An RNA of 177 nucleotides, treated with DMS and 2A3 and read out base by base.
For 2A3 the reverse transcriptase was SuperScript II with manganese.
RNA sequence: GGGAACGACUCGAGUAGAGUCGAAAACAUCGGAUCGAAGUAGCCGCCCGGGUUGCCCGCCAUCCAGGUAUAGGUACGGGUCGAGCUGAGCCAUUGCAGGAACAGAUAGACCGCCUCGGGAUGCUGCUAAGCGGGGAAAGUUCGCUUUCCCCGCUUAAAAAGAAACAACAACAACAAC
Reactivity to DMS in 0.01 (KOAc 150mM, MgCl2 10mM, bicine 150mM(pH8.5), 24C), signal-to-noise 1, nucleotides 027 to 126: c140a060u000c060g000g000a060u080c070g000a010a080g010u000a100g000c050c120g000c170c000c010g000g000g040u000u000g050c000c020c180g030c060c000a030u070c040c100a130g010g020u000a100u010a120g010g020u000a050c170g010g050g000u000c030g040a160g000c000u000g000a080g000c010c050a050u070u020g000c100a170g000g020a050a080c030a020g010a050u000a290g000a050c000c010g000c030c000u000c050g030g000g000a040u020g000c060u010g060c110
Reactivity to 2A3 in 0.01 (KOAc 150mM, MgCl2 10mM, bicine 150mM(pH8.5), 24C), signal-to-noise 1, nucleotides 027 to 126: c040a120u090c070g060g000a000u010c030g040a050a090g000u070a030g000c010c010g000c000c040c000g020g000g000u090u100g110c010c010c000g020c030c000a000u040c010c010a030g000g080u210a160u090a200g070g000u080a020c150g050g000g030u030c000g000a070g110c000u000g000a000g000c000c010a080u120u180g060c050a050g030g010a060a070c010a000g030a040u150a040g010a000c020c000g000c000c010u000c000g000g000g000a010u040g030c000u010g000c000
Conditions: 150 mM KOAc, 10 mM MgCl2 and 150 mM bicine (pH 8.5), 24 C. The DMS profile rests on 1,363 reads.